Structure probing data (DMS) for a 177-nucleotide construct.
It was measured as part of the RMDB library TTRDEL.
The reactions ran in a buffer of 150 mM KOAc, 10 mM MgCl2 and 150 mM bicine (pH 8.5), at 24 C.
Reactivities are given for positions 27 through 126.
RNA sequence: GGGAACGACUCGAGUAGAGUCGAAAAGAUAUGGACAGGUGACAUGAUGGUCGUCGGAAACGACGAUACCAUCAACAGCACCGUCCUAAGUCAAAUCAGGAUCAGUACUUCGGUACUGAUCCUGAAAGAAAUACCCUUCGUUCGCGAAGGGUAUUUCAAAAGAAACAACAACAACAAC
Reactivity to DMS in 0.01 (KOAc 150mM, MgCl2 10mM, bicine 150mM(pH8.5), 24C), signal-to-noise 2, nucleotides 027 to 126: g000a040u000a300u040g020g010a020c000a110g060g000u000g000a050c050a190u010g000a010u010g010g000u000c000g020u010c000g000g020a100a080a200c010g000a050c010g000a060u020a010c030c000a010u000c000a030a050c290a150g000c020a000c000c000g010u000c000c000u010a000a060g010u000c030a080a130a170u000c000a010g000g000a000u000c010a000g010u000a000c000u000u040c240g030g000u000a010c010u000g000a000u000c000c000u000g010a000a000a060